[RMDB]
RNA sequence: GGGAACGACUCGAGUAGAGUCGAAAAUACUUCGAUGCUAAUAGUUGGAACCGGUUAUGCAACCUUGUGGUGCAAUAAAUUUGUGGAGACGCGAGAUGUCAACCGCAUGUAAUCCAUUGAUUCAUGAGUCCAACAAAGUAGUACAGGCUCAAGAAGGACUAGAUCAGGACUUCGGUCCUGAUCUAGUAAAAGAAACAACAACAACAAC
Reactivity to 2A3 in 0.01 (KOAc 150mM, MgCl2 10mM, bicine 150mM(pH8.5), 24C), signal-to-noise 1, nucleotides 027 to 156: u160a060c050u070u030c050g070a110u070g000c060u030a010a030u060a220g000u040u000g030g000a110a150c040c070g040g010u070u040a110u120g000c020a000a140c040c000u080u120g030u090g000g060u100g040c000a020a030u130a180a110a020u200u050u010g000u010g010g140a030g020a060c040g000c000g070a000g000a050u040g070u040c000a010a010c050c010g060c010a010u030g080u200a000a010u000c030c020a140u040u300g000a050u010u020c000a060u040g040a000g120u000c030c000a000a000c010a000a040a140g020u040a000g020u030a130c080a120g050g120c070u020c100a060a050g030a060a000g090g040
Structure probing data (2A3) for a 207-nucleotide construct. Source: RMDB library OK3TST, as collected in RNAgym.